[RMDB]
RNA sequence: GGGAACGACUCGAGUAGAGUCGAAAACGUGAUCCAAGUAAGCCGAACGCUCGUGUCGGUGAGAAGUGGGUUUUCAUUCCAGAGUUUAAUCGCGCUGUACGAGAGGCGUUUUAUAACCGACCAGUUGAACAGCGUGAUGCAUGGCUUUUGUGGAUGGCCCUUGUAUUAGGUUCGCCUAAUACAAGGGAAAAGAAACAACAACAACAAC
Reactivity to 2A3 in 0.01 (KOAc 150mM, MgCl2 10mM, bicine 150mM(pH8.5), 24C), signal-to-noise 3, nucleotides 027 to 156: c100g060u100g030a040u040c000c020a100a040g100u060a070a010g000c020c000g030a040a010c040g080c140u160c170g200u220g060u150c020g060g000u080g000a060g040a070a030g070u140g010g000g040u090u020u030u050c010a010u000u000c000c000a000g030a020g030u030u040u300a020a000u010c000g000c000g000c000u010g010u050a070c070g020a040g030a060g180g000c020g010u000u010u060u090a090u010a030a010c010c030g170a180c040c020a130g000u090u100g170a070a000c000a000g000c000g010u020g000a000u000g020c030a050u210g040g000c010u050u050u110u040g060u140g020g000a020u020g020g020
Reactivity to DMS in 0.01 (KOAc 150mM, MgCl2 10mM, bicine 150mM(pH8.5), 24C), signal-to-noise 2, nucleotides 027 to 156: c060g010u020g010a090u000c010c010a050a130g000u000a170a140g010c040c000g000a070a070c040g020c110u020c140g000u000g040u000c030g020g030u020g000a060g000a030a050g030u000g020g010g000u000u010u000u000c060a090u000u010c020c000a070g000a060g020u010u000u010a050a020u000c020g040c010g000c020u000g010u000a180c030g000a090g010a280g000g000c000g000u000u000u020u000a110u030a100a020c030c040g040a300c000c010a140g050u000u000g000a080a080c010a030g000c020g080u000g000a020u000g010c060a140u000g000g020c000u000u000u000u010g060u010g010g010a070u010g020g000
Structure probing data (2A3 and DMS) for a 207-nucleotide construct. The DMS profile rests on 3,249 reads. The reactions ran in a buffer of 150 mM KOAc, 10 mM MgCl2 and 150 mM bicine (pH 8.5), at 24 C. For DMS the reverse transcriptase was MarathonRT. For 2A3, 1,389 sequencing reads were counted. It was measured as part of the RMDB library OK3TST.